[RMDB]
RNA sequence: GGGAACGACUCGAGUAGAGUCGAAAAUUUAUGAGCGUAUUUCCUUCAUGCAGUGCAUAGAAUAAUGUUUUCAUACUCACUUUACCCUCAGGUGCUUCAAACUAACUUAGUUUGAUUUUUCGUUGCCGAACGUAUUGGCCUUCGGGCCAAUACGUUCAAAAGAAACAACAACAACAAC
Reactivity to 2A3 in 0.01 (KOAc 150mM, MgCl2 10mM, bicine 150mM(pH8.5), 24C), signal-to-noise 1, nucleotides 027 to 126: u230u230u060a100u020g040a040g000c000g010u020a000u000u190u000c000c000u090u040c090a110u230g040c010a010g060u040g110c000a000u030a260g030a090a000u090a070a060u170g070u000u050u060u000c070a130u080a040c000u050c020a000c010u150u090u160a030c040c020c000u050c090a060g010g010u020g010c110u000u050c000a030a000a050c000u010a000a050c000u060u280a000g000u030u000u020g000a000u040u040u000u000u020c090g090u100u030g040c000c000